Structure probing data (2A3 and DMS) for a 177-nucleotide construct.
RNA sequence: GGGAACGACUCGAGUAGAGUCGAAAACGUGCGCGCUUCGUCACGGGUCCGUCCAUGAUGACGCCCAGUACGCCUGUGACGCGGUCGUCGAACCACUCCGCCGCUGCUCUCGUGUGCACUGGGGCAACACGAGGGUACCUUUCGAGGUACCCUCGUGAAAAGAAACAACAACAACAAC
Reactivity to 2A3 in 0.01 (KOAc 150mM, MgCl2 10mM, bicine 150mM(pH8.5), 24C), signal-to-noise 4, nucleotides 027 to 126: c020g020u090g000c030g010c020g010c040u050u050c030g030u000c000a000c020g000g000g010u050c060c010g020u000c020c040a220u260g050a170u200g010a050c030g030c020c040c010a020g050u080a050c090g000c000c020u010g000u020g000a020c020g000c020g000g030u120c030g020u030c030g020a040a060c030c010a080c060u020c020c000g050c010c010g050c060u050g020c020u010c010u020c050g110u100g040u060g090c030a020c090u040g000g000g020g040c020a050a040
Reactivity to DMS in 0.01 (KOAc 150mM, MgCl2 10mM, bicine 150mM(pH8.5), 24C), signal-to-noise 4, nucleotides 027 to 126: c110g020u000g010c050g010c140g000c020u000u000c010g000u010c000a010c040g010g000g020u000c150c070g010u020c010c090a140u010g000a130u010g010a040c050g030c090c050c040a070g000u000a080c260g010c000c000u010g010u000g010a020c020g010c060g010g020u000c040g010u000c060g020a110a170c070c080a130c080u020c020c040g010c060c020g000c040u010g010c050u000c030u000c070g020u000g010u000g010c030a100c030u010g010g010g000g000c090a100a130
The DMS profile rests on 5,065 reads.